[RMDB]
Overview:
Conditions: 150 mM KOAc, 10 mM MgCl2 and 150 mM bicine (pH 8.5), 24 C. Structure probing data (DMS and 2A3) for a 177-nucleotide construct. 2A3 adducts were read by reverse transcription with SuperScript II with manganese. The 2A3 profile rests on 3,306 reads. DMS adducts were read by reverse transcription with MarathonRT. It was measured as part of the RMDB library M2PK90.
RNA sequence: GGGAACGACUCGAGUAGAGUCGAAAAUCAUAGCUUCACCAGCGCGACCUCGUCCUCCACGAGCUGGCCCGCGGCCGCGAGCUCAGCUUUUACCUUCCCGCCCACCUCCUCGCGCAGGUACACCGAACUAAUUUGAAGAAUUCGUUCUUCAAAUUAGAAAAGAAACAACAACAACAAC
Reactivity to DMS in 0.01 (KOAc 150mM, MgCl2 10mM, bicine 150mM(pH8.5), 24C), signal-to-noise 4, nucleotides 027 to 126: u010c070a100u010a120g010c080u000u000c090a080c050c030a100g010c030g010c040g000a110c060c030u000c030g000u000c020c010u000c030c050a090c180g010a040g010c010u000g000g000c010c010c010g010c050g010g020c160c120g000c040g010a020g010c020u010c020a040g010c020u000u000u000u000a080c090c080u000u000c010c010c010g010c040c020c020a110c030c020u000c020c020u000c050g010c030g030c020a050g000g010u000a090c110a110c060c040g000a070a190
Reactivity to 2A3 in 0.01 (KOAc 150mM, MgCl2 10mM, bicine 150mM(pH8.5), 24C), signal-to-noise 2, nucleotides 027 to 126: u090c020a040u080a100g040c040u110u080c040a050c040c030a030g040c020g020c040g070a040c010c030u040c010g060u030c010c020u010c040c000a050c060g030a030g000c010u030g020g040c020c020c010g050c010g060g100c100c130g000c010g000a000g020c020u050c240a010g000c000u010u020u060u070a060c000c000u030u020c020c010c010g040c000c010c000a030c000c000u040c000c010u030c020g040c000g030c010a000g020g030u020a020c030a030c030c030g030a050a030